[RMDB]
This 207-nucleotide RNA was probed chemically with DMS and 2A3. For 2A3, 520 sequencing reads were counted. The reactions ran in a buffer of 150 mM KOAc, 10 mM MgCl2 and 150 mM bicine (pH 8.5), at 24 C. Values cover nucleotides 27 to 156.

RNA sequence: GGGAACGACUCGAGUAGAGUCGAAAAUGGACUUUUUACGGUUCCUACUUAUCCGGUUUUAACGCUGUUUUAUUGGCGCAAAGGUUUACGGAUAAACAACUAAUAAUUAAACCUUUUGUGUGCGAAAAUUGGACGUUUAGGUUCGCCUAAACGUCAAUCUAAUUCCCAACUUCGGUUGGGAAUUAGAAAAAGAAACAACAACAACAAC
Reactivity to DMS in 0.01 (KOAc 150mM, MgCl2 10mM, bicine 150mM(pH8.5), 24C), signal-to-noise 1, nucleotides 027 to 156: u000g000g000a210c000u040u000u000u010u000a150c090g020g080u010u000c000c020u010a080c090u010u000a040u000c010c000g000g030u000u010u000u010a160a110c010g000c030u000g030u010u000u000u010a170u030u030g030g000c000g020c050a070a030a050g030g010u000u000u000a170c030g010g000a040u010a000a040a160c090a060a170c100u010a010a090u000a080a220u020u000a010a030a000c010c000u010u010u010u000g050u010g000u000g010c000g010a100a050a120a270u000u010g010g010a000c000g000u000u000u000a000g010g070u000u010c300g000c010c000u000a000a010a000c000g050u000c000a000a030
Reactivity to 2A3 in 0.01 (KOAc 150mM, MgCl2 10mM, bicine 150mM(pH8.5), 24C), signal-to-noise 1, nucleotides 027 to 156: u070g030g020a010c010u080u080u110u110u180a090c200g000g000u050u040c000c000u010a030c010u050u000a000u030c000c010g000g000u040u000u010u030a040a010c000g040c020u070g120u140u190u070u300a170u040u300g020g000c030g000c040a000a050a000g000g000u000u000u000a000c000g000g000a000u040a070a070a000c030a030a000c070u100a130a170u130a250a050u220u090a040a000a000c000c000u020u090u060u050g080u000g030u010g010c090g050a030a070a140a300u090u150g020g010a010c010g000u000u020u000a000g030g010u000u020c170g000c030c000u000a000a000a000c000g000u000c000a000a000